The record gives the reactivity of an RNA of 177 nucleotides to 2A3 and DMS.
2A3 adducts were read by reverse transcription with SuperScript II with manganese.
RNA sequence: GGGAACGACUCGAGUAGAGUCGAAAAACGGAAACGUGUUAACACGAGGGACGCUCCGCAACAAAACACCAACUGCUGCGCACCAUCCUCCCUCUUCUUCCACUAGUGGCAGCCGGAGCAAACACCGCCGGACUAUAGUGUUCGCACUAUAGUCCGGAAAAGAAACAACAACAACAAC
Reactivity to 2A3 in 0.01 (KOAc 150mM, MgCl2 10mM, bicine 150mM(pH8.5), 24C), signal-to-noise 3, nucleotides 027 to 126: a000c100g030g030a040a200a000c050g000u030g040u060u220a120a100c030a040c100g030a070g000g000g040a010c040g000c020u020c000c010g020c000a010a090c040a050a180a010a000c080a020c020c060a110a020c010u020g000c010u020g010c110g000c030a010c020c020a040u060c000c000u020c000c000c030u010c010u070u000c010u040u020c020c000a060c090u050a040g040u020g110g020c010a010g000c000c000g000g000a000g000c030a000a030a010c080a000c010c030g000
Reactivity to DMS in 0.01 (KOAc 150mM, MgCl2 10mM, bicine 150mM(pH8.5), 24C), signal-to-noise 1, nucleotides 027 to 126: a110c000g000g000a130a040a140c010g010u030g020u020u060a010a040c000a000c000g000a090g000g020g000a130c050g000c090u000c090c020g020c130a000a090c090a000a050a050a150c130a060c040c110a050a150c010u010g000c000u000g040c030g000c060a070c060c010a060u010c090c000u000c020c000c000u000c030u000u010c000u000u020c050c030a080c070u010a130g000u030g000g040c090a010g080c080c030g020g000a020g000c000a070a080a160c040a090c140c000g000